Notes:
An RNA of 207 nucleotides, treated with DMS and 2A3 and read out base by base. The DMS profile rests on 3,514 reads. Reactivities are given for positions 27 through 156. Source: RMDB library OK3TST, as collected in RNAgym. Conditions: 150 mM KOAc, 10 mM MgCl2 and 150 mM bicine (pH 8.5), 24 C. For DMS the reverse transcriptase was MarathonRT.
RNA sequence: GGGAACGACUCGAGUAGAGUCGAAAACAUAUGAUGCAUCUUCAAUACCCAUAAUGUUGAAUGAACAUAUGGAAGUGAUAUAUAAUCUCUCUGUAUCAGAUUUCAGAGUUGAGUUAACUAAUCACAAUUUAAGAUUGAUGGCUAAAGUUCAAAACUCGAUUAGUAGAUGCUUCGGCAUCUACUAAUCAAAAGAAACAACAACAACAAC
Reactivity to DMS in 0.01 (KOAc 150mM, MgCl2 10mM, bicine 150mM(pH8.5), 24C), signal-to-noise 2, nucleotides 027 to 156: c020a020u000a020u000g000a170u000g030c130a140u010c020u000u000c010a040a040u000a020c020c000c300a150u000a080a110u010g010u000u000g000a070a030u000g010a090a180c010a020u000a020u000g010g010a130a160g020u000g010a050u000a060u000a110u000a080a230u000c010u010c010u000c000u000g010u000a040u000c050a220g000a200u000u000u000c020a020g020a020g010u000u000g000a080g040u000u000a050a120c090u000a070a060u000c020a030c050a080a120u000u000u000a080a120g000a140u020u000g010a100u000g010g010c060u000a030a050a190g000u000u000c030a040a100a080a210c130u010c050
Reactivity to 2A3 in 0.01 (KOAc 150mM, MgCl2 10mM, bicine 150mM(pH8.5), 24C), signal-to-noise 6, nucleotides 027 to 156: c030a020u160a070u220g070a050u170g040c010a050u010c040u020u030c030a040a060u060a190c030c000c020a020u110a150a200u070g030u010u040g130a200a260u180g020a040a020c010a010u020a000u010g010g040a120a100g060u010g010a010u040a010u010a010u010a130a120u000c000u000c000u000c000u020g040u080a070u110c070a120g110a300u100u130u060c000a010g010a000g040u170u060g040a040g030u050u050a030a020c030u020a110a010u010c000a000c000a060a060u060u100u100a060a030g020a040u010u130g040a040u040g050g000c040u090a100a050a050g030u080u090c060a020a100a090a090c050u080c100